[RMDB]
RNA sequence: GGGAACGACUCGAGUAGAGUCGAAAACGUAUGCCCGGGGCGUGCUGGUUGAGAUGUACCGGGAAGCCAAGACCCGCCUGGGCGACCCGGUGCUGGCGUGGGCCGACAUUCAGGCGGAUCCCGAGCGCACUUUAGGUCAUUUCGAUGACCUAAAGUGAAAAGAAACAACAACAACAAC
Reactivity to 2A3 in 0.01 (KOAc 150mM, MgCl2 10mM, bicine 150mM(pH8.5), 24C), signal-to-noise 3, nucleotides 027 to 126: c020g050u080a060u180g020c000c020c030g010g010g000g020c090g030u200g060c030u030g020g070u130u100g070a150g030a220u150g030u020a010c000c000g040g000g020a020a000g000c000c000a040a010g040a080c010c010c020g050c040c030u070g020g020g000c010g000a000c010c000c000g000g020u040g000c030u030g030g010c040g070u200g030g110g010c010c010g010a020c010a060u100u110c000a010g000g010c000g000g010a030u020c000c020c000g040a040g020c070g000
Reactivity to DMS in 0.01 (KOAc 150mM, MgCl2 10mM, bicine 150mM(pH8.5), 24C), signal-to-noise 4, nucleotides 027 to 126: c140g010u010a090u010g010c020c010c020g000g000g000g000c070g020u000g020c030u000g020g000u000u010g010a130g010a110u010g020u010a020c020c010g000g010g010a050a300g000c000c020a100a100g010a120c070c010c040g010c200c020u000g010g010g000c010g000a230c010c000c010g000g020u000g000c040u000g000g020c030g000u010g010g000g020c000c010g030a100c050a070u000u000c040a050g000g010c020g010g000a110u010c000c010c000g020a090g000c120g020